[RMDB]
RNA sequence: GGGAACGACUCGAGUAGAGUCGAAAAACAGGUCGGUUGCUAUCUAACGGGGGUGUCAGGGCGGCUGAGGGGAAGGAGGCUCUAGUACGAGAGGAACGAGCCUCCGGCGCCACUGGUUUACCGGUUGCUUAUCUGACGGUUUCGACCGUCAGAUAAGAAAAGAAACAACAACAACAAC
Reactivity to DMS in 0.01 (KOAc 150mM, MgCl2 10mM, bicine 150mM(pH8.5), 24C), signal-to-noise 2, nucleotides 027 to 126: a120c130a080g020g010u000c040g000g030u000u030g080c080u020a060u010c030u010a090a110c100g000g020g020g000g020u020g000u030c110a090g020g030g000c090g000g000c080u000g010a100g010g030g000g020a070a080g000g010a020g010g000c000u000c000u000a020g020u000a130c010g000a140g000a240g000g010a120a070c110g000a010g000c000c000u000c000c000g010g020c080g000c020c050a040c050u020g000g000u020u040u000a120c050c020g000g030u000u020g010
Reactivity to 2A3 in 0.01 (KOAc 150mM, MgCl2 10mM, bicine 150mM(pH8.5), 24C), signal-to-noise 3, nucleotides 027 to 126: a000c040a030g030g050u070c030g040g010u080u110g060c030u080a100u150c030u090a050a060c040g010g010g000g000g010u060g070u060c040a030g030g020g050c060g000g030c080u090g040a040g000g010g040g000a010a060g000g000a010g000g000c010u000c000u010a000g000u010a000c010g000a010g000a040g130g010a010a000c010g010a010g000c010c000u000c000c000g000g000c000g000c000c010a050c010u020g040g020u070u120u090a050c010c010g040g000u050u060g000
Chemical mapping of a 177-nucleotide RNA with DMS and 2A3. The RNA was probed in 150 mM KOAc, 10 mM MgCl2 and 150 mM bicine (pH 8.5) at 24 C. For 2A3, 2,693 sequencing reads were counted. It was measured as part of the RMDB library RFM100.